Conditions: 150 mM KOAc, 10 mM MgCl2 and 150 mM bicine (pH 8.5), 24 C. An RNA of 177 nucleotides, treated with DMS and read out base by base. It was measured as part of the RMDB library TTRDEL.
RNA sequence: GGGAACGACUCGAGUAGAGUCGAAAAGAUAUGGAUUAGAACUACAGAAGAAGUCAGCGAAGAACUCGGAAACGAGGGAGCUGUCACUUCUGCUAAUCCUAAGUCAAAAGUACCGUUCGCGGUACAAGUACUUUUUAUUCUUCGGAAUAAAAAGUACAAAAGAAACAACAACAACAAC
Reactivity to DMS in 0.01 (KOAc 150mM, MgCl2 10mM, bicine 150mM(pH8.5), 24C), signal-to-noise 4, nucleotides 027 to 126: g010a060u000a300u000g000g000a040u000u000a010g000a080a050c060u020a300c030a000g000a020a010g010a180a150g020u000c010a010g030c010g010a070a160g010a120a200c000u000c010g000g010a110a080a190c010g000a010g000g000g010a070g000c000u000g000u000c010a120c010u000u010c000u000g020c010u000a010a010u000c000c000u040a050a080g000u000c030a090a080a120a080g010u000a000c000c000g030u000u010c210g020c010g010g010u000a000c010a030a100